[RMDB]
RNA sequence: GGGAACGACUCGAGUAGAGUCGAAAAACAUUAUUCAGAUUCAGCAUUCAGCUUAGAUAUUACCUAAUUUAGAAGCUUCCCCUGAUUGAAUUGAGUGCCCUUUCUUUGUAUCACUUUGUCCUUUCUCCUGUAUCCCUCAAUGCUUUUCUCCUGUACAACUGGUAAAUGAUUUCGAUCAUUUACCAGUAAAAGAAACAACAACAACAAC
Reactivity to DMS in 0.01 (KOAc 150mM, MgCl2 10mM, bicine 150mM(pH8.5), 24C), signal-to-noise 3, nucleotides 027 to 156: a090c050a100u010u000a070u010u000c020a100g000a160u000u000c030a050g020c020a070u010u010c040a090g030c010u010u010a110g010a130u010a060u010u000a110c060c030u020a070a100u000u010u000a130g000a120a080g030c050u000u000c010c010c010c030u000g000a080u000u000g010a090a110u000u010g010a110g020u000g000c020c020c040u010u020u000c040u000u000u000g010u000a080u000c060a050c040u000u000u000g000u000c010c030u000u000u000c020u000c020c040u030g010u010a130u000c020c020c000u000c030a050a090u000g000c020u000u000u000u000c020u000c010c020u000g000u000a090c050a150
Reactivity to 2A3 in 0.01 (KOAc 150mM, MgCl2 10mM, bicine 150mM(pH8.5), 24C), signal-to-noise 3, nucleotides 027 to 156: a000c030a040u130u160a090u140u210c060a030g070a130u100u040c030a020g010c030a030u020u090c040a050g000c020u030u090a020g040a090u070a100u120u140a090c010c010u070a120a140u080u090u120a160g040a240a010g030c020u010u040c000c000c000c020u020g040a100u050u060g020a100a070u020u020g020a030g050u040g000c000c000c000u100u090u030c040u100u100u080g030u050a050u100c010a040c070u050u040u070g020u070c000c010u040u040u040c020u000c030c020u040g010u070a020u030c010c020c010u010c010a020a010u050g030c000u000u040u010u020c030u000c000c000u000g030u090a070c020a060
About this RNA: An RNA of 207 nucleotides, treated with DMS and 2A3 and read out base by base. Values are in units of 0.01, from 0 to 300, in steps of 10. 2A3 is a SHAPE reagent: it acylates the 2'-hydroxyl of flexible nucleotides of all four kinds. For 2A3 the reverse transcriptase was SuperScript II with manganese. The reactions ran in a buffer of 150 mM KOAc, 10 mM MgCl2 and 150 mM bicine (pH 8.5), at 24 C. DMS adducts were read by reverse transcription with MarathonRT.